[RMDB]
RNA sequence: GGGAACGACUCGAGUAGAGUCGAAAACCCGUUCUGGGGAAGCCUCAUGGGUAAAUUAGAAGGACAACCUUUGUUUUAAAGGUAUACCUUCGCUUUUUAGAACAGCGAGGAUCUUAUGAGUUGAGCUCCACGGAUAUCUUUUCGAAGAUAUCCGUGGAAAAGAAACAACAACAACAAC
Reactivity to 2A3 in 0.01 (KOAc 150mM, MgCl2 10mM, bicine 150mM(pH8.5), 24C), signal-to-noise 2, nucleotides 027 to 126: c010c000c000g010u090u030c020u130g000g080g000g000a140a050g030c000c010u020c030a030u130g020g000g100u060a030a080a060u140u110a040g000a020a000g000g020a040c120a110a000c020c000u100u000u040g300u120u290u080u240a000a000a000g020g000u050a090u190a020c000c010u010u010c010g000c000u040u000u000u000u140a060g060a180a010c020a030g080c070g080a020g000g000a040u020c010u020u120a070u090g060a010g090u000u040g050a020g020c020u020
Conditions: 150 mM KOAc, 10 mM MgCl2 and 150 mM bicine (pH 8.5), 24 C. An RNA of 177 nucleotides, treated with 2A3 and read out base by base. It was measured as part of the RMDB library RFM100. Reactivities are given for positions 27 through 126. The 2A3 profile rests on 783 reads.